This 177-nucleotide RNA was probed chemically with DMS. It was measured as part of the RMDB library OK2TRN. The RNA was probed in 150 mM KOAc, 10 mM MgCl2 and 150 mM bicine (pH 8.5) at 24 C. DMS adducts were read by reverse transcription with MarathonRT.

RNA sequence: GGGAACGACUCGAGUAGAGUCGAAAAGCGCGUGAGGGCGGUGACGAUUAUUUCUUGUAAAACAAAAUGAGGUCGUUGGCGAAGUCAAAAUGCUCACCGUCGUUUUGUUGAGGUACGCUCUGUGCGGCGAGGCUAAAUCUUUCGAGAUUUAGCCUCGAAAAGAAACAACAACAACAAC
Reactivity to DMS in 0.01 (KOAc 150mM, MgCl2 10mM, bicine 150mM(pH8.5), 24C), signal-to-noise 1, nucleotides 027 to 126: g010c000g000c010g000u000g000a020g010g000g000c010g030g010u000g010a050c130g020a110u000u010a080u000u020u000c070u000u010g010u010a070a090a030a080c020a000a000a030a010u000g000a120g000g030u000c110g040u000u000g000g030c010g000a020a130g020u000c300a040a090a130a070u000g000c050u020c100a030c040c020g000u000c000g010u000u000u010u000g000u000u000g000a150g000g020u020a050c020g010c020u000c000u010g020u000g000c010g020g010